RNA sequence: GGGAACGACUCGAGUAGAGUCGAAAAACUGCCAUACGUGGCCGAAACACGCCUUACCAGGACUAAACAGCGUGUCUAAAAAACAGUCCUUCAUACCUGAUCUGGAGGGUAGAUCAGGAAUACUAAAAAAAUCGGGUGAAGUUCGCUUCACCCGAAACAUAUGGAACCAGUUCGCUGGUUCCAUAUGAAAAGAAACAACAACAACAAC
Reactivity to DMS in 0.01 (KOAc 150mM, MgCl2 10mM, bicine 150mM(pH8.5), 24C), signal-to-noise 2, nucleotides 027 to 156: a030c010u010g030c000c010a090u000a080c140g070u000g000g050c000c080g000a200a140a040c020a040c000g030c000c020u000u010a070c040c060a010g020g010a060c010u000a070a040a050c040a050g000c010g030u000g010u010c130u000a000a010a050a080a040a030c100a070g000u010c010c010u010u000c040a160u010a120c010c000u000g000a010u000c010u000g020g040a130g040g010g010u010a010g010a020u000c000a030g020g000a070a050u000a170c120u030a020a030a050a070a100a120a090u000c010g010g010g030u000g000a030a010g060u000u010c300g020c000u000u000c000a020c000c010c000g000a000a000a050
Reactivity to 2A3 in 0.01 (KOAc 150mM, MgCl2 10mM, bicine 150mM(pH8.5), 24C), signal-to-noise 5, nucleotides 027 to 156: a000c030u030g000c010c010a030u040a070c150g070u040g010g000c000c010g050a060a090a000c000a000c000g000c000c000u040u050a020c020c060a010g000g000a000c000u050a090a090a020c010a000g000c000g010u000g020u050c140u040a010a000a000a010a010a010c040a010g000u000c030c000u020u100c050a070u070a150c000c000u010g000a010u000c000u030g040g060a080g070g070g030u070a010g000a000u010c010a000g020g040a000a010u100a060c060u130a030a010a000a020a010a030a160u040c000g000g010g000u000g010a000a000g020u060u140c160g040c100u010u000c000a000c010c010c000g000a000a000a000